[RMDB]
RNA sequence: GGGAACGACUCGAGUAGAGUCGAAAACUCAUAGUUCGCUAUGAGAAAAGCGGUUGGGAGGUCCGCCGAUGCGGACCGUCGGGGUCGUUACCUCGCCCGGCCGCAAAGGUCUUGCUUCGGCAAGACCCUUCUCAGGAUAGUUCGCUAUCCUGAGAAGAAAAGAAACAACAACAACAAC
Reactivity to 2A3 in 0.01 (KOAc 150mM, MgCl2 10mM, bicine 150mM(pH8.5), 24C), signal-to-noise 1, nucleotides 027 to 126: c000u000c000a020u010a010g030u060u060c210g020c040u000a010u010g010a000g050a040a120a010a030g000c000g000g010u010u000g010g020g010a080g040g000u010c010c000g050c050c120g100a080u300g010c000g000g000a020c000c000g000u000c010g000g000g010g000u050c090g220u180u250a030c000c000u000c000g000c010c000c000g000g000c000c000g000c010a010a050a030g000g000u000c000u000u000g010c000u040u090c220g090g000c000a000a000g000a010c000c000
Reactivity to DMS in 0.01 (KOAc 150mM, MgCl2 10mM, bicine 150mM(pH8.5), 24C), signal-to-noise 2, nucleotides 027 to 126: c010u000c000a010u000a000g010u000u020c210g000c010u000a000u010g010a010g000a100a080a130a170g040c000g020g000u000u000g010g020g010a080g000g020u000c010c040g080c010c300g010a140u000g040c020g010g000a020c000c020g020u000c020g020g000g010g000u000c300g030u020u020a170c000c000u000c000g010c000c000c010g010g000c000c000g000c010a000a020a050g000g000u000c000u000u000g010c000u000u000c280g000g000c000a000a000g010a010c000c000

Structure probing data (2A3 and DMS) for a 177-nucleotide construct. For 2A3 the reverse transcriptase was SuperScript II with manganese. Values are in units of 0.01, from 0 to 300, in steps of 10. The reactions ran in a buffer of 150 mM KOAc, 10 mM MgCl2 and 150 mM bicine (pH 8.5), at 24 C. It was measured as part of the RMDB library RFMREP.